The record gives the reactivity of an RNA of 177 nucleotides to DMS and 2A3.
The data come from the RNA Mapping Database (RMDB), library OK2TRN.
Reactivities are given for positions 27 through 126.
For 2A3, 2,104 sequencing reads were counted.

RNA sequence: GGGAACGACUCGAGUAGAGUCGAAAAACAUCAAUUCUCAAAAUUCACUUGGGUCAAUCGCGCAGGUGUCCAAUUCGCGGAUGGUCCCCUUAUUCCGUCUGAACAAUUUAGUUUGGGGGGAGUCUCCCACCAAGAUUUACUUCGGUAAAUCUUGGUGAAAAGAAACAACAACAACAAC
Reactivity to DMS in 0.01 (KOAc 150mM, MgCl2 10mM, bicine 150mM(pH8.5), 24C), signal-to-noise 3, nucleotides 027 to 126: a100c120a050u010c110a060a110u020u000c020u010c040a130a070a100a100u010u010c050a040c050u000u000g010g020g020u010c110a080a100u000c130g030c030g020c110a050g000g020u000g010u000c100c090a070a130u010u010c140g010c050g010g000a050u000g000g010u000c020c010c040c170u010u000a050u010u000c030c030g000u000c040u000g010a020a030c030a110a120u010u000u010a100g000u000u000u000g010g010g020g000g010g000a020g010u010c050u000c010c010
Reactivity to 2A3 in 0.01 (KOAc 150mM, MgCl2 10mM, bicine 150mM(pH8.5), 24C), signal-to-noise 3, nucleotides 027 to 126: a010c040a030u140c030a050a150u180u000c070u050c040a110a090a030a070u150u110c030a030c100u050u090g040g020g060u060c060a090a110u080c090g000c020g020c100a030g040g060u070g090u090c030c040a060a070u100u140c050g000c010g070g010a030u030g010g040u060c000c010c000c000u060u150a100u210u000c020c060g250u000c010u020g020a000a020c000a090a160u170u300u300a130g000u000u040u080g000g010g000g000g020g000a000g030u030c050u020c040c010